[RMDB]
This 207-nucleotide RNA was probed chemically with 2A3. It was measured as part of the RMDB library OK3TST. 2A3 adducts were read by reverse transcription with SuperScript II with manganese. Reactivities are given for positions 27 through 156.
RNA sequence: GGGAACGACUCGAGUAGAGUCGAAAAAGGCCCAGGCACUGUGUGCUUUAUGGAUCGUCUUUCUAAUUUACUUGAACCUGGGAUCCAUGGUCACUUCUAAGAGAUCAAGUCUAUUUUACUCUAAGUAGUUUCUUUGAGUAAGGUUGGACAUUUAUUAAUCGAGCUAUAGGUUCGCCUAUAGCUCGAUAAAAGAAACAACAACAACAAC
Reactivity to 2A3 in 0.01 (KOAc 150mM, MgCl2 10mM, bicine 150mM(pH8.5), 24C), signal-to-noise 1, nucleotides 027 to 156: a000g160g000c000c010c030a010g030g010c090a030c100u120g040u040g020u100g170c000u060u200u110a060u020g000g000a010u020c000g210u070c080u040u040u000c070u080a200a220u160u230u150a100c060u120u100g060a000a050c020c110u070g040g000g020a010u020c010c000a020u040g000g030u050c010a010c050u100u050c080u120a010a090g010a020g000a100u120c140a090a030g000u000c000u000a080u040u030u060u070a000c000u000c030u060a020a020g000u000a060g070u260u250u140c010u000u000u000g000a000g000u000a000a000g000g030u110u240g000g000a000c010a040u060u070u090a120u130u230a130